This 177-nucleotide RNA was probed chemically with 2A3 and DMS. 2A3 is a SHAPE reagent: it acylates the 2'-hydroxyl of flexible nucleotides of all four kinds. For DMS the reverse transcriptase was MarathonRT. Values cover nucleotides 27 to 126. Values are in units of 0.01, from 0 to 300, in steps of 10. For DMS, 2,778 sequencing reads were counted. The RNA was probed in 150 mM KOAc, 10 mM MgCl2 and 150 mM bicine (pH 8.5) at 24 C. The 2A3 profile rests on 3,269 reads.
RNA sequence: GGGAACGACUCGAGUAGAGUCGAAAACCUACGGAAAUCCCUGAGUUCCUCGGAUGUCCAGGCCGUCCCCUCUUCUAGAGAAGGGAGACUCCGGAACUUCUUCCAUGAUUGGGACGAAGCCGCCACCCCCAUUAUUAAGGUUCGCCUUAAUAAUGGGAAAAGAAACAACAACAACAAC
Reactivity to 2A3 in 0.01 (KOAc 150mM, MgCl2 10mM, bicine 150mM(pH8.5), 24C), signal-to-noise 3, nucleotides 027 to 126: c020c000u020a030c050g000g040a020a050a050u040c010c000c010u040g060a060g100u050u030c000c020u010c030g020g000a040u080g020u000c040c030a050g010g030c020c010g020u020c000c000c010c000u020c010u050u070c040u090a110g030a030g010a220a080g040g040g010a040g020a040c040u020c070c090g050g000a020a020c020u040u010c010u050u000c030c010a050u120g010a130u200u190g020g000g000a000c010g030a040a020g010c010c010g050c030c010a040c010c010
Reactivity to DMS in 0.01 (KOAc 150mM, MgCl2 10mM, bicine 150mM(pH8.5), 24C), signal-to-noise 4, nucleotides 027 to 126: c020c010u010a140c150g020g010a030a130a130u010c010c000c040u010g020a150g010u010u010c030c020u000c130g010g030a050u000g010u000c010c080a130g020g000c020c020g000u010c010c000c010c060u000c010u000u010c090u010a130g000a100g010a090a040g000g000g010a110g000a110c070u010c060c060g030g010a140a120c040u000u000c030u010u000c040c040a070u000g000a170u000u010g020g010g010a050c070g010a080a060g010c050c050g000c070c060a120c100c090